[RMDB]
RNA sequence: GGGAACGACUCGAGUAGAGUCGAAAAACCAUCGCCAAAGCCAGGUCGGCCUCCGCUCGGCUGCCGCCUCUCUACUACCCAUUACAAUGCUCGCCCAAAGCGCGAUGGCGGCGGAUUGCACGCGAGCCACGCAUAAUGAUUUCGAUCAUUAUGCGUGAAAAGAAACAACAACAACAAC
Reactivity to 2A3 in 0.01 (KOAc 150mM, MgCl2 10mM, bicine 150mM(pH8.5), 24C), signal-to-noise 9, nucleotides 027 to 126: a000c020c000a050u060c030g010c010c020a100a050a010g030c010c010a030g020g040u070c030g020g020c000c010u030c010c020g040c040u060c040g030g000c020u020g010c010c010g000c000c000u020c000u010c010u030a060c020u050a050c000c000c010a050u080u060a060c060a080a080u130g010c000u010c020g020c000c010c010a070a080a030g050c050g000c030g080a050u080g070g010c010g010g000c020g000g030a090u070u160g040c060a020c060g030c000g010a010g000c000
Reactivity to DMS in 0.01 (KOAc 150mM, MgCl2 10mM, bicine 150mM(pH8.5), 24C), signal-to-noise 9, nucleotides 027 to 126: a100c030c010a090u020c040g010c010c040a070a090a130g000c040c030a070g020g010u010c050g010g000c030c020u010c040c050g010c040u000c060g010g010c030u000g010c020c020g010c020c010u000c040u010c030u010a060c080u000a110c010c000c010a080u020u020a080c170a090a100u010g010c010u000c020g010c010c070c030a070a130a090g010c060g020c050g010a080u010g000g010c030g000g010c080g010g000a090u010u010g010c080a100c160g010c020g010a040g020c050